An RNA of 177 nucleotides, treated with DMS and 2A3 and read out base by base. For 2A3 the reverse transcriptase was SuperScript II with manganese. The RNA was probed in 150 mM KOAc, 10 mM MgCl2 and 150 mM bicine (pH 8.5) at 24 C. It was measured as part of the RMDB library OK2TST.
RNA sequence: GGGAACGACUCGAGUAGAGUCGAAAACACGCUUGAAAAACUAUAGUCCAGCGCUAAGGCCAAAUCGUAGCUUUGAUGUUUAUGACCGGAUUGGACAACAAGUGGAACCAUUCAGGGCUCCUAAGAAGUAAAAGAACACAUUCGUGUGUUCUUUUACAAAAGAAACAACAACAACAAC
Reactivity to DMS in 0.01 (KOAc 150mM, MgCl2 10mM, bicine 150mM(pH8.5), 24C), signal-to-noise 5, nucleotides 027 to 126: c120a110c070g000c030u010u010g010a090a060a060a120a150c150u000a100u000a120g010u000c020c000a040g010c090g010c120u020a050a130g010g010c040c020a030a070a080u000c050g010u010a100g010c120u000u010u000g020a040u000g000u000u000u000a050u010g010a060c030c020g000g010a150u010u000g010g000a020c040a100a140c080a030a040g010u010g000g000a040a070c020c020a100u010u010c180a090g010g000g000c050u000c010c020u010a070a090g000a090a130
Reactivity to 2A3 in 0.01 (KOAc 150mM, MgCl2 10mM, bicine 150mM(pH8.5), 24C), signal-to-noise 4, nucleotides 027 to 126: c040a010c010g020c010u020u050g090a090a070a020a040a050c070u110a120u110a230g020u010c010c020a010g030c040g000c100u070a050a060g050g000c040c030a040a050a060u070c070g080u090a040g050c030u090u080u170g100a100u080g080u070u200u060a140u100g030a030c020c000g110g010a180u040u050g010g000a010c030a010a010c020a050a000g050u010g050g020a020a030c010c000a010u100u110c050a030g120g030g000c010u040c010c020u040a110a070g090a130a000